[RMDB]
RNA sequence: GGGAACGACUCGAGUAGAGUCGAAAAAAUGAUAUUCAUACUCACAAUCCAUAUCCACCAUACUGUAUGCCACUCAAAUUUAUGUGCAACGGUACAAGCUUAUACUUGCACAACGUGCGUCCAACUGCCCCAGUACAGUAUUUCCUUGUACAACAAGCUUUACCCUUCAGUUCGCUGAAGGGUAAAGAAAAGAAACAACAACAACAAC
Reactivity to DMS in 0.01 (KOAc 150mM, MgCl2 10mM, bicine 150mM(pH8.5), 24C), signal-to-noise 2, nucleotides 027 to 156: a040a060u010g010a130u000a090u020u000c040a140u000a080c040u000c050a050c040a120a060u010c040c000a070u010a090u000c030c020a060c050c040a100u010a050c020u000g010u000a070u020g000c040c020a070c070u010c080a080a050a140u000u000u000a100u000g020u010g000c000a070a000c050g020g070u000a010c030a040a010g040c030u000u000a150u000a030c010u000u000g010c010a030c010a040a160c050g020u000g020c050g010u000c060c030a050a140c050u010g000c020c010c010c000a300g020u000a040c000a040g000u000a050u000u000u000c070c030u000u000g010u010a050c070a060a070c090a100a120g020
Reactivity to 2A3 in 0.01 (KOAc 150mM, MgCl2 10mM, bicine 150mM(pH8.5), 24C), signal-to-noise 3, nucleotides 027 to 156: a000a000u170g030a060u090a090u120u120c040a020u030a080c010u040c050a060c040a040a100u050c050c020a040u030a040u060c020c010a040c010c030a030u040a060c030u020g030u090a040u050g010c030c010a050c050u120c100a050a120a180u150u170u130a110u120g030u020g000c010a020a020c100g050g000u040a050c040a090a020g020c040u110u030a030u020a160c010u020u050g000c010a010c000a040a110c090g050u080g020c030g020u010c020c050a080a080c100u080g030c010c020c000c010a000g010u030a020c020a020g010u030a080u010u040u020c000c000u030u050g020u030a050c020a090a010c010a080a040g030
Structure probing data (DMS and 2A3) for a 207-nucleotide construct. It was measured as part of the RMDB library OK3TST. For 2A3 the reverse transcriptase was SuperScript II with manganese. The reactions ran in a buffer of 150 mM KOAc, 10 mM MgCl2 and 150 mM bicine (pH 8.5), at 24 C. For DMS, 3,278 sequencing reads were counted. For DMS the reverse transcriptase was MarathonRT.